[RMDB]
RNA sequence: GGGAACGACUCGAGUAGAGUCGAAAAACAGAUCUGGGCCUUGUGCUCGCCGAGGCUGAGCUUAUCAACUGGGGUUUGAGGCUCCCAGCCGCCAUAAUCGCCGAUAGGCUCGCCGCGUGGUGGAGCCUCACAUGGUGCUCUUCGGAGCACCAUGUGAAAAAGAAACAACAACAACAAC
Reactivity to 2A3 in 0.01 (KOAc 150mM, MgCl2 10mM, bicine 150mM(pH8.5), 24C), signal-to-noise 2, nucleotides 027 to 126: a000c050a030g020a220u090c100u130g040g000g000c010c000u020u080g030u110g070c010u010c010g010c000c050g050a090g000g120c140u240g030a000g000c010u050u060a020u050c040a060a140c130u080g020g050g000g000u000u090u080g100a070g020g000c000u090c040c040c010a020g000c010c020g060c050c020a060u130a150a070u090c060g050c160c030g040a040u060a020g010g000c000u020c030g000c020c020g040c070g030u170g030g000u030g120g070a000g000c000c010
Reactivity to DMS in 0.01 (KOAc 150mM, MgCl2 10mM, bicine 150mM(pH8.5), 24C), signal-to-noise 2, nucleotides 027 to 126: a080c100a110g000a100u010c060u010g020g020g000c070c020u010u000g010u010g000c020u010c010g030c080c040g010a090g010g030c020u020g010a040g030c020u000u000a050u000c080a150a170c190u010g000g000g000g020u000u000u000g020a140g000g000c020u010c060c050c050a150g020c050c040g000c100c080a050u020a060a050u010c080g010c060c100g010a040u010a010g000g010c010u000c040g010c020c020g020c120g020u000g000g000u000g000g030a020g010c010c050